[RMDB]
RNA sequence: GGGAACGACUCGAGUAGAGUCGAAAAUGGUAGUCAGGAUAUCUUGGAGUAUGAAUGGGUGGAGUUUGAGCUGCCCGAAGGCAACUUCUCGGUGACCAUGACCAUCGACCUGAUGAACAACGCCAUCAUCGACAAUUACUUGGCGGUGGGGCGGCAGAUGACUUGUGUUUUUCGAAACACAAGUCAUAAAAGAAACAACAACAACAAC
Reactivity to 2A3 in 0.01 (KOAc 150mM, MgCl2 10mM, bicine 150mM(pH8.5), 24C), signal-to-noise 3, nucleotides 027 to 156: u100g000g020u020a020g020u000c010a000g010g030a070u040a060u140c050u080u120g020g000a030g020u090a160u180g060a130a040u120g060g000g000u050g060g030a090g040u110u120u290g120a100g020c000u000g000c010c000c030g040a070a030g090g000c010a010a020c010u020u000c000u010c020g020g000u030g010a020c050c020a110u100g030a030c020c000a000u010c030g040a040c000c020u020g050a040u070g000a060a030c040a040a040c030g020c010c000a200u050c000a000u010c020g010a010c010a010a030u090u100a150c180u080u050g020g000c000g000g000u000g000g000g020g010c000g020g000c020a040g030
Reactivity to DMS in 0.01 (KOAc 150mM, MgCl2 10mM, bicine 150mM(pH8.5), 24C), signal-to-noise 1, nucleotides 027 to 156: u000g030g010u010a030g010u000c010a110g020g000a070u010a030u010c020u000u010g000g020a100g030u000a090u010g020a060a180u010g000g010g020u000g000g000a120g020u010u040u000g010a150g010c030u020g020c000c000c000g000a050a100g010g020c100a080a030c010u010u010c030u000c130g010g030u000g020a110c030c030a070u010g000a130c070c010a030u000c020g000a090c010c010u020g000a100u030g000a140a080c040a060a020c020g000c000c000a110u000c010a030u020c010g020a010c030a030a100u000u010a210c190u000u000g030g000c000g000g020u000g010g010g000g000c010g000g000c040a080g000
This 207-nucleotide RNA was probed chemically with 2A3 and DMS. For DMS, 3,574 sequencing reads were counted. DMS adducts were read by reverse transcription with MarathonRT. Values cover nucleotides 27 to 156.